RNA sequence: GGGAACGACUCGAGUAGAGUCGAAAAUUGUAGAAUUAGAUGACCAAGGGCAUCAUUUAGACUCCUAUUUUGUCGUUAAGAGGCAUACUAUGGAGAAUUAUGAACUAGAGAAGCACUGUUACGACUUAUACGUUACUGAGUUCGCUCAGUAACGUAUAAAAGAAACAACAACAACAAC
Reactivity to DMS in 0.01 (KOAc 150mM, MgCl2 10mM, bicine 150mM(pH8.5), 24C), signal-to-noise 1, nucleotides 027 to 126: u010u000g020u000a120g010a070a110u010u000a060g000a100u010g000a140c050c000a160a110g020g020g000c050a130u030c060a100u010u000u010a030g000a260c020u020c010c010u000a100u000u000u000u000g010u000c020g000u020u020a080a130g000a130g000g000c010a060u000a060c110u000a070u000g000g000a060g000a070a060u010u000a050u000g010a060a110c060u000a000g000a070g010a110a060g010c010a040c080u000g030u000u010a040c100g000a060c070u040u000
Reactivity to 2A3 in 0.01 (KOAc 150mM, MgCl2 10mM, bicine 150mM(pH8.5), 24C), signal-to-noise 1, nucleotides 027 to 126: u070u080g060u060a020g060a050a030u090u000a040g040a080u040g050a090c020c070a090a050g020g010g000c010a020u030c020a030u090u000u050a110g030a030c010u000c020c000u010a060u080u110u020u040g010u000c040g000u000u120a180a040g100a080g050g000c020a020u050a060c010u080a050u090g020g000a000g070a040a030u130u040a100u110g050a070a030c030u040a030g040a000g020a110a000g000c030a070c020u010g030u070u090a010c050g010a000c030u030u020
Source: RMDB library 15KREP, as collected in RNAgym.
This 177-nucleotide RNA was probed chemically with DMS and 2A3.
Conditions: 150 mM KOAc, 10 mM MgCl2 and 150 mM bicine (pH 8.5), 24 C.
For DMS, 840 sequencing reads were counted.
2A3 adducts were read by reverse transcription with SuperScript II with manganese.